[RMDB]
RNA sequence: GGGAACGACUCGAGUAGAGUCGAAAAGGAUAAGCUUGGUUUACCAAGCGAAAGGUCGAAUUCUACUGGAGGAUUCCGCUCCUUUGCGCUUUUUUUUCGGAUUAGGCGUGGAGGCGAAAGUCACCCUCUAGCUUGAGUUCUUCGGAACUCAAGCUAGAAAAGAAACAACAACAACAAC
Reactivity to 2A3 in 0.01 (KOAc 150mM, MgCl2 10mM, bicine 150mM(pH8.5), 24C), signal-to-noise 2, nucleotides 027 to 126: g140g000a080u060a100a000g000c000u000u000g000g080u150u180u260a110c000c000a000a000g000c010g020a000a010a000g040g010u040c000g000a040a120u030u000c010u010a000c020u060g120g000a010g000g030a030u050u030c040c000g020c030u090c000c000u000u000u030g080c000g000c050u060u060u080u000u000u030u070u160c200g110g010a020u000u060a030g020g000c010g030u010g050g000a000g020g000c040g060a080a090a000g090u110c070a180c020c010c000u000